[RMDB]
RNA sequence: GGGAACGACUCGAGUAGAGUCGAAAAAUGCUUCUUUGCACACACAGAUGGCUCGUUCGGAACACCACCUGGAUACGGCUGCGCUGCAGACCGGGCAGAGGAGCAGCGCCGGCACCAAGAUGGGCUGCCAAUACUCGUAUUUCGAUACGAGUAUUGGAAAAGAAACAACAACAACAAC
Reactivity to 2A3 in 0.01 (KOAc 150mM, MgCl2 10mM, bicine 150mM(pH8.5), 24C), signal-to-noise 6, nucleotides 027 to 126: a000u050g000c010u020u020c000u040u040u040g020c040a040c000a000c000a000c010a110g030a060u030g010g020c050u070c250g060u170u090c100g120g090a080a010c030a020c020c000a010c000c010u020g010g020a090u090a170c020g040g000c020u030g000c300g070c140u200g000c010a030g080a270c010c000g020g040g000c020a010g010a030g030g000a010g000c000a010g010c030g050c000c030g020g000c060a120c100c020a070a020g120a200u150g000g010g050c030u050g030
Reactivity to DMS in 0.01 (KOAc 150mM, MgCl2 10mM, bicine 150mM(pH8.5), 24C), signal-to-noise 9, nucleotides 027 to 126: a100u000g000c010u000u000c020u000u000u000g020c020a160c180a130c210a150c030a030g000a040u000g020g010c070u000c100g000u000u010c240g010g010a130a070c080a140c020c010a020c030c000u000g000g000a190u010a140c050g000g000c010u000g010c010g030c110u010g000c010a040g010a150c020c010g000g010g020c030a030g000a040g010g010a060g010c010a040g010c090g020c040c040g010g010c030a110c030c030a070a090g010a110u010g000g000g010c100u000g010
The record gives the reactivity of an RNA of 177 nucleotides to 2A3 and DMS. DMS adducts were read by reverse transcription with MarathonRT. The RNA was probed in 150 mM KOAc, 10 mM MgCl2 and 150 mM bicine (pH 8.5) at 24 C. Reactivities are given for positions 27 through 126. The DMS profile rests on 13,562 reads. It was measured as part of the RMDB library OK2TRN. 2A3 adducts were read by reverse transcription with SuperScript II with manganese. The 2A3 profile rests on 16,566 reads.